The record gives the reactivity of an RNA of 207 nucleotides to DMS and 2A3.

[RMDB]
RNA sequence: GGGAACGACUCGAGUAGAGUCGAAAAUCAUUUUAAAGUGUACACAAUUCAGUGGCAUUUAAUUCAUUCAGUGUUGGUACCUGUCAUCUCUUUCUAGUUUCACAGCAUUCUCAUCACCCUAGAGGAAGCCCUGCAUCCAUUAAGCAGUGACUCCCCAUAUCGAACGAAAGUUCGCUUUCGUUCGAUAAAAAGAAACAACAACAACAAC
Reactivity to DMS in 0.01 (KOAc 150mM, MgCl2 10mM, bicine 150mM(pH8.5), 24C), signal-to-noise 2, nucleotides 027 to 156: u020c010a120u010u010u000u000a070a060a140g020u000g030u000a140c040a100c040a100a170u000u000c200a110g030u000g000g030c040a080u000u000u010a000a100u000u000c090a100u010u000c100a080g020u000g020u010u000g020g000u000a090c060c020u000g000u000c030a130u000c010u000c030u010u010u010c030u000a090g010u000u000u010c040a100c050a060g000c050a120u000u000c030u000c020a080u000c040a080c000c010c010u010a110g020a100g000g020a060a100g030c020c020c010u000g000c000a120u000c090c120a160u000u010a100a150g050c020a040g000u000g010a110c000u000c020c010c000c030a230
Reactivity to 2A3 in 0.01 (KOAc 150mM, MgCl2 10mM, bicine 150mM(pH8.5), 24C), signal-to-noise 3, nucleotides 027 to 156: u030c000a010u020u030u040u220a140a110a030g030u020g040u300a180c050a000c020a080a230u300u250c110a070g050u020g010g010c020a020u070u100u130a150a080u140u090c120a050u110u060c040a030g030u010g030u100u090g040g000u050a060c000c010u040g070u040c020a080u010c020u020c010u060u100u030c030u050a050g050u050u070u100c050a030c010a030g020c000a050u120u000c050u010c040a090u050c010a070c010c020c010u020a040g010a020g060g040a050a030g040c030c000c000u010g000c000a050u050c080c000a010u030u100a100a020g000c030a000g020u020g100a050c020u010c040c000c000c010a020